[RMDB]
RNA sequence: GGGAACGACUCGAGUAGAGUCGAAAAGUGGCUGCGGUGCCGAUCCGGAUCGCCUCCUGGGUCGACAUGCCGCGCUCUCGCGCCUCGACCAUCCGGGACACCAAGAACACCUCGUAGUCGGUGGAUAAAUUUAGUUGCGUUUCGACGCAACUAAAUUAAAAGAAACAACAACAACAAC
Reactivity to DMS in 0.01 (KOAc 150mM, MgCl2 10mM, bicine 150mM(pH8.5), 24C), signal-to-noise 3, nucleotides 027 to 126: g020u020g000g020c030u010g040c030g000g020u000g010c040c020g000a020u000c020c010g000g000a050u000c170g000c060c050u020c030c000u000g010g020g030u000c000g030a080c150a060u020g010c080c010g040c030g000c060u000c010u000c100g010c080g040c040c020u010c010g060a120c070c040a030u020c090c030g000g000g010a040c060a160c060c110a120a100g000a070a080c090a090c050c030u020c090g000u020a080g000u000c040g020g020u020g000g000a060u000a020
Reactivity to 2A3 in 0.01 (KOAc 150mM, MgCl2 10mM, bicine 150mM(pH8.5), 24C), signal-to-noise 3, nucleotides 027 to 126: g090u090g060g000c060u060g000c090g020g010u030g020c020c000g000a020u020c000c000g000g010a060u090c060g050c030c020u040c020c020u080g000g000g000u030c010g020a050c020a070u210g030c040c000g010c010g000c010u010c000u010c010g020c000g010c000c010u030c000g030a060c000c000a050u040c020c020g020g000g030a020c020a020c040c000a040a020g050a060a020c010a040c030c020u090c050g070u040a050g060u050c050g010g030u050g060g000a100u150a130

This 177-nucleotide RNA was probed chemically with DMS and 2A3. Conditions: 150 mM KOAc, 10 mM MgCl2 and 150 mM bicine (pH 8.5), 24 C. It was measured as part of the RMDB library OK1LIB.